[RMDB]
RNA sequence: GGGAACGACUCGAGUAGAGUCGAAAAUAGGCGAACGAGAGGCCCUCUCAUGUGCGGAGUUGUCACGCUGACAGAAUUGUUAUGAUGUCCGAUUCCGGUAGCAUCGCGGCGAUGCUUUCAUAGGACAUCUUAUGAACCCAAGUGCUUCGGGGAAGCAGGAUUAGCACUAUUUCGAUAGUGCUAAUCCAAAAGAAACAACAACAACAAC
Reactivity to DMS in 0.01 (KOAc 150mM, MgCl2 10mM, bicine 150mM(pH8.5), 24C), signal-to-noise 1, nucleotides 027 to 156: u000a120g010g000c050g010a120a080c030g030a070g040a120g040g000c050c030c030u020c020u000c020a120u010g040u000g060c040g000g020a160g000u000u000g010u010c000a140c010g020c000u000g010a110c020a080g000a120a110u000u000g010u000u010a080u000g010a040u000g020u000c010c000g010a200u000u010c110c030g000g000u000a010g020c000a000u000c060g000c150g020g020c180g020a060u000g000c010u010u000u000c010a090u000a140g030g010a030c010a030u000c000u000u020a060u010g000a060a150c010c000c060a040a110g030u000g010c030u000u000c020g000g010g030g010a070a060g000c020a180
Reactivity to 2A3 in 0.01 (KOAc 150mM, MgCl2 10mM, bicine 150mM(pH8.5), 24C), signal-to-noise 2, nucleotides 027 to 156: u120a000g010g050c020g010a010a040c070g000a110g010a050g200g000c000c000c000u040c000u030c010a050u100g030u090g030c020g020g040a050g000u050u070g030u060c040a050c090g070c040u050g030a060c010a050g140a080a200u200u130g050u050u070a050u100g000a000u010g000u000c010c010g080a100u160u060c170c070g050g080u020a000g000c000a000u000c010g020c080g220g050c160g000a020u000g000c000u060u080u080c090a100u090a100g030g000a000c000a000u000c010u000u020a120u030g030a030a050c000c000c020a000a030g070u040g030c000u040u040c040g090g000g030g010a010a000g000c050a050
Annotation: Conditions: 150 mM KOAc, 10 mM MgCl2 and 150 mM bicine (pH 8.5), 24 C. Structure probing data (DMS and 2A3) for a 207-nucleotide construct. In probing experiments dimethyl sulfate is read out at A N1 and C N3, which are open when not base-paired. 2A3 is a SHAPE reagent: it acylates the 2'-hydroxyl of flexible nucleotides of all four kinds.